[RMDB]
RNA sequence: GGGAACGACUCGAGUAGAGUCGAAAAUGUUGGUUCUCCCGCAACGCUACUCUGUUUACCAGGUCAGGUCCGGAAGGAAGCAGCCAAGGCAGAUGACGCGUGUGCCGGGAUGUAGCUGGCAGGGCAAAAGUAUGAUCUUGUUCGCAAGAUCAUACAAGAGUCCCAUAUAGUUCGCUAUAUGGGACUCAAAAGAAACAACAACAACAAC
Reactivity to DMS in 0.01 (KOAc 150mM, MgCl2 10mM, bicine 150mM(pH8.5), 24C), signal-to-noise 1, nucleotides 027 to 156: u000g050u020u010g000g010u000u000c030u000c000c010c030g050c040a090a060c030g010c000u000a200c300u000c030u000g080u000u000u000a100c040c020a250g090g000u000c040a300g010g010u020c010c000g030g040a110a250g040g000a040a090g010c070a250g030c010c040a160a300g020g000c030a060g020a020u000g030a060c010g010c040g000u010g010u010g050c080c010g090g020g000a060u020g030u000a030g060c010u010g020g030c030a100g010g000g010c010a070a030a090a140g040u000a010u000g010a000u000c010u000u020g000u000u010c300g030c010a010a030g000a010u000c000a000u000a010c000a010a140
Reactivity to 2A3 in 0.01 (KOAc 150mM, MgCl2 10mM, bicine 150mM(pH8.5), 24C), signal-to-noise 3, nucleotides 027 to 156: u030g000u010u020g040g000u000u000c000u010c010c010c000g010c000a010a000c000g000c000u010a020c020u010c000u010g060u030u120u110a240c130c070a100g020g040u130c010a000g000g040u000c010c000g010g110a080a090g030g000a010a010g010c010a000g000c000c010a050a060g040g000c000a000g000a030u030g010a020c050g040c030g010u070g210u050g020c170c050g000g000g000a020u030g030u070a000g020c010u010g020g000c010a040g030g040g020c110a060a060a030a090g000u010a000u000g000a000u000c000u000u010g000u030u060c150g000c120a010a000g000a000u000c000a000u000a000c000a010a000
This 207-nucleotide RNA was probed chemically with DMS and 2A3.
2A3 adducts were read by reverse transcription with SuperScript II with manganese.
Source: RMDB library ARCHII, as collected in RNAgym.
Conditions: 150 mM KOAc, 10 mM MgCl2 and 150 mM bicine (pH 8.5), 24 C.
For DMS, 1,989 sequencing reads were counted.
For 2A3, 2,789 sequencing reads were counted.